This 177-nucleotide RNA was probed chemically with 2A3 and DMS. The RNA was probed in 150 mM KOAc, 10 mM MgCl2 and 150 mM bicine (pH 8.5) at 24 C. It was measured as part of the RMDB library OK1LIB. Reactivities are given for positions 27 through 126.
RNA sequence: GGGAACGACUCGAGUAGAGUCGAAAAGAAGAGAAUAAAUAGAGGAGUCAGGGUUCGCACACGCUCCGCGAACCCACGGUAACACUGACUGUGGAGCGGAAAAGGCAGAUACCGAACUGCCAAAGAACGUAGCUAUCCAUUUCGAUGGAUAGCUACGAAAAGAAACAACAACAACAAC
Reactivity to 2A3 in 0.01 (KOAc 150mM, MgCl2 10mM, bicine 150mM(pH8.5), 24C), signal-to-noise 4, nucleotides 027 to 126: g130a040a020g080a020g030a070a090u200a110a060a050u250a090g080a080g130g050a020g010u040c050a060g020g020g000u010u000c000g000c000a010c010a010c080g000c000u000c000c010g000c000g000a010a010c000c020c000a000c020g020g000u080a090a010c060a010c150u090g070a000c030u070g070u100g170g000a020g000c000g010g000a060a120a000a000g020g000c000a000g010a020u090a120c030c070g020a040a070c000u000g000c000c000a050a020a000g030a030a010
Reactivity to DMS in 0.01 (KOAc 150mM, MgCl2 10mM, bicine 150mM(pH8.5), 24C), signal-to-noise 3, nucleotides 027 to 126: g000a090a090g000a120g020a060a060u050a040a070a110u050a100g000a090g020g000a030g000u030c030a060g000g010g010u000u000c010g000c030a080c260a130c040g020c000u020c010c000g020c000g090a000a030c020c010c020a040c110g000g000u010a130a080c130a090c130u000g030a010c010u010g000u000g000g000a060g000c010g000g000a070a010a110a140g000g020c000a010g030a060u040a160c130c220g000a130a150c000u000g000c010c020a050a020a080g000a130a120